[RMDB]
RNA sequence: GGGAACGACUCGAGUAGAGUCGAAAAGAUAUGGAGACGAGCUAGGAACUACGACUAAGGGUCGGAAACGACCCGAUGUCGCCUUGGACCUCGUCUCCUAAGUCAAACCCCUGGUUCGCCAGGGGAAGAUAUUGCUUGGGUUCGCCCAAGCAAUAUCAAAAGAAACAACAACAACAAC
Reactivity to DMS in 0.01 (KOAc 150mM, MgCl2 10mM, bicine 150mM(pH8.5), 24C), signal-to-noise 3, nucleotides 027 to 126: g000a030u000a300u000g010g010a030g000a010c010g020a020g020c010u000a040g010g020a060a060c090u010a300c030g000a000c000u010a270a300g000g000g020u000c000g010g000a050a060a240c000g000a010c000c000c000g010a010u000g000u000c010g000c010c040u010u010g010g010a070c300c020u010c000g020u000c010u000c010c000u000a010a050g000u000c020a080a140a160c010c000c000c000u000g000g000u010u000c180g000c030c000a000g020g000g000g000a000a010
Reactivity to 2A3 in 0.01 (KOAc 150mM, MgCl2 10mM, bicine 150mM(pH8.5), 24C), signal-to-noise 2, nucleotides 027 to 126: g030a010u070a020u150g020g010a010g010a010c020g000a000g050c040u040a030g070g010a130a100c120u190a080c300g010a010c000u060a050a130g000g010g000u010c010g010g060a060a060a000c010g000a010c000c000c020g010a010u010g000u000c010g000c000c010u020u090g060g050a050c020c020u000c000g000u020c010u010c000c000u000a000a000g000u000c010a080a040a190c000c010c000c010u000g000g040u050u070c300g060c070c000a000g000g020g010g010a000a010